[RMDB]
RNA sequence: GGGAACGACUCGAGUAGAGUCGAAAAGCCCGCCCAAAGGUCAACUCAGGUGGGACAGAGAUCCACCGUAGAGUGUAAGGGCAAAAGUUGGCCUGACUGUAUUUCGAUCAGCAAGAAAUUCAGAGGCCGAUAUGCAGUCUUUCGAGACUGCAUAUCGAAAAGAAACAACAACAACAAC
Reactivity to 2A3 in 0.01 (KOAc 150mM, MgCl2 10mM, bicine 150mM(pH8.5), 24C), signal-to-noise 2, nucleotides 027 to 126: g030c000c000c000g030c000c000c000a090a090a000g150g080u150c040a050a020c030u010c010a000g050g000u020g010g010g050a040c020a020g240a000g020a180u060c000c000a000c010c020g080u180a090g000a000g010u020g010u030a040a140g040g000g000c030a050a050a000a020g080u070u050g010g010c000c000u030g140a160c000u000g000u010a000u000u000u020c060g060a100u090c050a020g200c100a180a000g010a020a010a020u030u010c000a000g030a010g040g000c000
Reactivity to DMS in 0.01 (KOAc 150mM, MgCl2 10mM, bicine 150mM(pH8.5), 24C), signal-to-noise 4, nucleotides 027 to 126: g020c010c000c010g050c000c000c040a050a180a170g010g010u020c130a060a030c010u000c000a200g010g030u000g000g010g020a100c110a210g010a200g000a160u040c000c000a020c000c000g000u050a060g000a010g000u000g000u020a150a210g000g000g000c000a090a030a070a100g000u010u000g000g020c000c000u020g010a150c000u010g020u010a000u010u000u010c010g010a140u040c200a160g020c250a110a140g000a010a020a010u010u000c000a040g020a100g000g000c010
This 177-nucleotide RNA was probed chemically with 2A3 and DMS. Conditions: 150 mM KOAc, 10 mM MgCl2 and 150 mM bicine (pH 8.5), 24 C. Source: RMDB libraries RFM100 and RFMREP, as collected in RNAgym. For 2A3, 1,206 sequencing reads were counted.